[RMDB]
RNA sequence: GGGAACGACUCGAGUAGAGUCGAAAAGAGCGUCGAGAGACGAAGAGAAGUGCACCGAUCAGCAAAGGGGAACGUAAUGGUGCACAAGAGUAAGUCAGUGCAACGUUCUCAGGGCACUGGAGGCAGAGGGACUCGCAUGAUUCGUCAUGCGAGUCCCAAAAGAAACAACAACAACAAC
Reactivity to DMS in 0.01 (KOAc 150mM, MgCl2 10mM, bicine 150mM(pH8.5), 24C), signal-to-noise 1, nucleotides 027 to 126: g000a040g010c020g040u000c000g000a240g000a090g000a000c050g130a000a090g000a140g000a130a030g000u000g040c000a020c080c030g140a150u090c150a090g150c210a160a020a060g000g000g000g010a060a030c020g000u030a080a220u000g000g000u000g020c000a000c000a000a060g000a140g000u010a110a160g000u000c040a110g060u000g050c000a080a110c180g000u000u000c010u000c050a200g000g000g000c050a000c010u010g000g000a140g000g080c000a080g000a270
Reactivity to 2A3 in 0.01 (KOAc 150mM, MgCl2 10mM, bicine 150mM(pH8.5), 24C), signal-to-noise 1, nucleotides 027 to 126: g080a050g000c000g000u010c030g120a060g000a000g100a020c000g020a040a120g010a000g020a300a000g030u000g030c000a060c050c000g000a210u070c010a060g030c060a030a070a070g140g080g040g000a090a090c000g020u000a080a000u240g000g000u020g000c000a000c000a010a000g090a140g230u300a050a000g000u130c060a000g000u000g000c000a000a100c000g060u050u090c000u000c090a000g050g000g000c000a000c070u000g010g070a040g040g040c070a050g000a060
Source: RMDB library OK1LIB, as collected in RNAgym. This 177-nucleotide RNA was probed chemically with DMS and 2A3. The RNA was probed in 150 mM KOAc, 10 mM MgCl2 and 150 mM bicine (pH 8.5) at 24 C. Values cover nucleotides 27 to 126.